[RMDB]
RNA sequence: GGGAACGACUCGAGUAGAGUCGAAAAAAAAAGAUCGAAAGAUCAAACGGUAGAAAAGAUGGUUUGAAAACCACGCCUUCUACCAAUAUAGUAAAUAAAUAGGCGUAAGUACGAAAGUAGAAAAAAACAUACGUAUUAGUUUCGACUAAUACGUAUGAAAAGAAACAACAACAACAAC
Reactivity to DMS in 0.01 (KOAc 150mM, MgCl2 10mM, bicine 150mM(pH8.5), 24C), signal-to-noise 2, nucleotides 027 to 126: a070a050a090a070a100g000a000u000c010g010a170a060a150g000a010u000c010a040a070a070c180g000g010u000a000g010a020a020a000a020g020a110u000g010g000u000u000u010g000a090a060a080a030c010c010a000c050g000c010c000u000u000c000u000a010c000c010a090a070u000a070u000a140g000u010a060a030a060u010a040a060a100u020a020g000g020c000g000u000a060a040g010u000a030c030g000a050a060a100g010u000a010g000a010a010a040a070a010a110a150
Reactivity to 2A3 in 0.01 (KOAc 150mM, MgCl2 10mM, bicine 150mM(pH8.5), 24C), signal-to-noise 3, nucleotides 027 to 126: a000a020a000a000a010g000a010u020c010g020a040a020a000g000a000u000c000a020a050a010c040g000g010u000a010g030a010a020a020a000g080a220u010g000g070u010u100u160g140a160a160a000a010c010c000a000c000g000c000c000u010u000c000u010a010c000c000a000a010u050a010u000a010g060u050a000a060a140u110a060a090a070u240a060g000g010c000g030u040a070a030g100u030a010c030g030a140a040a030g030u070a050g220a050a090a010a000a010a000a010